Chemical mapping of a 177-nucleotide RNA with DMS and 2A3.
RNA sequence: GGGAACGACUCGAGUAGAGUCGAAAAUUCAGUUCUUCAGCUGCCCCAGCCACGUUUCAGAUGCUCAGUAAUCACACGGGGCAGCUCGUGGCUGCCACAUUGUGCAGCACAGAUUACAGAACAUGCCCCAAUCUUACCCAUUCGUGGGUAAGAUUGGAAAAGAAACAACAACAACAAC
Reactivity to DMS in 0.01 (KOAc 150mM, MgCl2 10mM, bicine 150mM(pH8.5), 24C), signal-to-noise 4, nucleotides 027 to 126: u000u010c150a140g000u000u000c010u000u000c100a110g020c010u000g000c010c000c020c020a200g020c110c090a080c140g020u010u000u010c120a140g000a070u000g000c050u000c090a130g020u010a020a050u010c070a160c190a100c160g000g010g010g020c010a010g010c000u000c060g020u010g020g000c000u010g010c030c030a130c200a140u000u020g020u010g010c010a010g000c010a030c060a080g010a050u020u010a030c140a070g000a020a010c010a080u000g010c100c070
Reactivity to 2A3 in 0.01 (KOAc 150mM, MgCl2 10mM, bicine 150mM(pH8.5), 24C), signal-to-noise 3, nucleotides 027 to 126: u130u070c030a010g020u030u000c000u050u040c050a030g010c010u010g000c000c000c000c000a030g070c050c020a140c120g060u080u180u150c100a070g020a100u060g020c030u030c170a050g070u240a080a080u080c030a050c010a020c170g000g000g010g000c000a000g000c000u000c000g030u030g060g010c000u000g000c040c010a080c030a190u150u280g010u210g040c000a000g040c000a000c000a010g070a050u110u070a050c020a060g030a000a000c010a040u080g030c000c000

Source: RMDB library OK2TRN, as collected in RNAgym. Conditions: 150 mM KOAc, 10 mM MgCl2 and 150 mM bicine (pH 8.5), 24 C.